[RMDB]
RNA sequence: GGGAACGACUCGAGUAGAGUCGAAAAAUUGAGCUUCGAAACGUUAACUUCAGUCGGUCGACGUCUUAACUGGUGCGGAAGACAAUAUCAUGUAAUGCGAUAUGGCGAGUGUUAUGUGACACUGCGGCGUGCCAAUGCCUUUCGAGGCAUUGGCACGAAAAGAAACAACAACAACAAC
Reactivity to DMS in 0.01 (KOAc 150mM, MgCl2 10mM, bicine 150mM(pH8.5), 24C), signal-to-noise 2, nucleotides 027 to 126: a050u040u000g010a120g000c090u000u000c060g000a100a130a200c100g000u030u040a070a050c020u000u000c070a090g030u020c040g000g000u020c080g000a080c040g000u000c080u030u000a050a060c050u000g000g030u010g010c040g010g000a040a040g010a080c040a060a020u010a100u010c020a070u000g000u020a070a040u010g000c070g000a090u030a040u010g010g000c010g000a050g020u010g030u010u000a070u010g010u010g000a050c090a030c090u000g010c080g000g020
Reactivity to 2A3 in 0.01 (KOAc 150mM, MgCl2 10mM, bicine 150mM(pH8.5), 24C), signal-to-noise 3, nucleotides 027 to 126: a020u060u070g040a010g020c040u060u060c040g020a040a030a050c010g030u050u120a060a010c050u070u070c030a080g060u050c000g000g030u050c050g000a060c020g020u020c020u040u200a130a170c060u060g050g030u050g020c030g070g030a030a000g030a020c040a080a020u130a010u140c010a020u060g060u070a140a000u050g030c010g000a020u010a030u190g140g000c040g000a010g040u020g010u030u070a120u080g060u080g040a000c000a020c020u060g030c090g090g000
Chemical mapping of a 177-nucleotide RNA with DMS and 2A3. It was measured as part of the RMDB libraries RFM100 and RFMREP. Values cover nucleotides 27 to 126. For DMS the reverse transcriptase was MarathonRT.